The data come from the RNA Mapping Database (RMDB), library M2RFPK.
Chemical mapping of a 207-nucleotide RNA with DMS and 2A3.
For 2A3, 1,366 sequencing reads were counted.
Reactivities are given for positions 27 through 156.
The reactions ran in a buffer of 150 mM KOAc, 10 mM MgCl2 and 150 mM bicine (pH 8.5), at 24 C.
As a SHAPE reagent, 2A3 marks flexible, mostly unpaired nucleotides at the ribose 2'-OH.
[RMDB]
RNA sequence: GGGAACGACUCGAGUAGAGUCGAAAAUAACCCCUAUACUUGUAUAGGCGAUUAAUAAAUCUUCUGUAAAUGCUGUAAGGGGAUUACCCCUUGAGGUUUCAGCACUAGGCUGCUCUAGCGAUUAAUCACAACGAUUUGGUCUUCGGACCAAAUCGAAGAUUUGAAGAUUGUUCGCAAUCUUCAAAUCAAAAGAAACAACAACAACAAC
Reactivity to DMS in 0.01 (KOAc 150mM, MgCl2 10mM, bicine 150mM(pH8.5), 24C), signal-to-noise 1, nucleotides 027 to 156: u010a040a130c010c000c000c020u010a030u000a020c100u000u000g040u000a040u010a020g020g010c100g010a080u000u000a080a120u010a050a110a150u000c120u000u020c070u000g010u000a010a070a030u000g020c040u010g060u010a060a020g030g000g030g050a210u010u000a150c010c010c010c010u000u000g010a150g000g010u000u000u020c000a210g010c020a010c040u010a120g000g030c020u010g000c050u000c060u000a080g010c040g030a190u010u000a110a100u000c070a120c080a160a300c010g000a020u000u020u000g010g000u000c020u000u010c300g010g010a040c000c000a010a020a000u000c010g000a030a060
Reactivity to 2A3 in 0.01 (KOAc 150mM, MgCl2 10mM, bicine 150mM(pH8.5), 24C), signal-to-noise 2, nucleotides 027 to 156: u040a020a060c010c000c000c000u040a070u020a210c030u090u160g030u070a030u020a030g000g000c000g020a010u010u130a110a170u210a160a190a060u020c010u050u030c020u010g070u050a020a150a090u080g080c060u030g080u120a040a060g000g000g000g030a020u020u130a080c000c000c000c000u000u020g030a040g020g050u030u170u280c020a000g000c000a010c050u080a070g210g000c030u040g030c000u020c040u080a000g040c010g070a050u070u160a060a080u070c030a030c050a200a040c050g000a000u000u000u000g010g010u000c010u030u050c160g000g000a000c000c000a000a000a000u000c000g000a010a000